[RMDB]
RNA sequence: GGGAACGACUCGAGUAGAGUCGAAAAAGAUGACAUGACAGACCCUGAUUAUCCUAAUUUGCUUUGUAGAGUGACAUCAAGUGACUUUUGUGUUAUGUCUGACCGUAUGAGCCUUACCGUGAUGUCAAAAUUUACCAGGGUUCGCCCUGGUAAAUUUAAAAGAAACAACAACAACAAC
Reactivity to DMS in 0.01 (KOAc 150mM, MgCl2 10mM, bicine 150mM(pH8.5), 24C), signal-to-noise 3, nucleotides 027 to 126: a100g000a100u000g020a030c030a030u000g000a050c050a080g010a180c060c010c020u010g010a090u000u010a090u000c040c050u010a070a100u000u000u010g010c070u010u000u010g020u000a080g010a100g020u000g000a030c060a020u000c030a170a090g000u000g010a070c050u010u000u000u000g020u010g010u000u000a020u000g000u010c050u010g010a160c040c030g030u000a040u000g010a080g000c020c020u010u010a080c090c040g010u000g000a040u000g000u000c030a060
Reactivity to 2A3 in 0.01 (KOAc 150mM, MgCl2 10mM, bicine 150mM(pH8.5), 24C), signal-to-noise 2, nucleotides 027 to 126: a000g070a030u090g000a000c000a040u000g000a030c010a030g070a060c000c000c040u050g060a050u030u160a020u070c010c020u060a130a120u090u080u010g060c040u170u060u080g110u050a060g020a080g200u070g040a020c020a010u080c030a090a060g040u010g130a120c000u150u120u110u140g160u010g030u060u000a080u090g030u000c060u030g040a060c010c000g050u030a090u190g050a020g030c040c000u080u030a060c000c030g070u050g050a040u000g010u000c020a000
Record summary:
Source: RMDB library OK2TRN, as collected in RNAgym. The record gives the reactivity of an RNA of 177 nucleotides to DMS and 2A3. High 2A3 reactivity points to a flexible backbone, as in loops and unpaired stretches. For 2A3, 1,022 sequencing reads were counted. The DMS profile rests on 3,479 reads. The reactions ran in a buffer of 150 mM KOAc, 10 mM MgCl2 and 150 mM bicine (pH 8.5), at 24 C.